[RMDB]
RNA sequence: GGGAACGACUCGAGUAGAGUCGAAAAAAAAAAAGAUAUGGACCAUACCGCCCAUAGGGAGCUCGAACAUCGGAAACGAUGUACGAGCGAAGAACUAUGUAACAAGUAUGGUCCUAAGUCAAAAAAACUAAUCCCUUUAGUUCGCUAAAGGGAUUAGAAAAGAAACAACAACAACAAC
Reactivity to DMS in 0.01 (KOAc 150mM, MgCl2 10mM, bicine 150mM(pH8.5), 24C), signal-to-noise 1, nucleotides 027 to 126: a000a000a080a070a030a210a090g040a020u010a160u040g000g000a010c000c000a010u000a000c010c080g020c300c300c000a000u000a010g020g000g000a070g010c000u000c000g040a180a010c000a000u010c020g020g020a120a060a060c000g000a000u000g000u000a040c100g010a010g010c000g070a070a070g000a080a170c000u000a010u000g000u020a060a060c170a180a080g000u000a040u010g010g010u000c000c000u000a000a040g010u010c010a000a000a040a210a080a000a040
An RNA of 177 nucleotides, treated with DMS and read out base by base. The DMS profile rests on 855 reads. The data come from the RNA Mapping Database (RMDB), library TTRDES. The RNA was probed in 150 mM KOAc, 10 mM MgCl2 and 150 mM bicine (pH 8.5) at 24 C. DMS adducts were read by reverse transcription with MarathonRT.